[RMDB]
RNA sequence: GGGAACGACUCGAGUAGAGUCGAAAAGGACGACAAACCGUAGGUACUCUUGCCCUUUAUUGUUGGGUGCACCCUGGGACCCAGUAAUACCCGGGGGGAGGCGGGGUUAACCCAUACUAUGGGAACUCUCUAAGUAUUUGUUCGCAAAUACUUAGAGAAAAGAAACAACAACAACAAC
Reactivity to DMS in 0.01 (KOAc 150mM, MgCl2 10mM, bicine 150mM(pH8.5), 24C), signal-to-noise 2, nucleotides 027 to 126: g040g000a030c050g030a080c130a070a080a140c020c050g000u000a020g000g020u010a100c070u010c080u000u010g030c020c020c010u000u010u010a080u020u010g030u000u000g010g010g020u000g010c100a100c020c030c010u010g000g000g000a120c010c030c010a060g010u000a030a040u000a130c030c010c030g010g010g000g000g020g020a050g000g000c070g010g000g020g020u000u000a130a090c000c010c000a070u010a080c160u010a070u000g000g000g000a130a110c140u000
Reactivity to 2A3 in 0.01 (KOAc 150mM, MgCl2 10mM, bicine 150mM(pH8.5), 24C), signal-to-noise 1, nucleotides 027 to 126: g020g030a010c030g010a000c080a030a110a020c040c010g050u040a030g000g060u070a060c010u040c030u060u110g050c040c010c000u070u140u050a180u070u150g110u060u070g010g000g000u010g030c010a070c010c020c000u010g060g000g000a060c020c010c010a010g050u080a030a030u060a160c010c000c000g010g000g000g000g010g010a040g030g020c050g040g000g000g000u050u060a030a030c010c000c010a010u110a080c110u080a040u060g000g030g020a030a020c010u000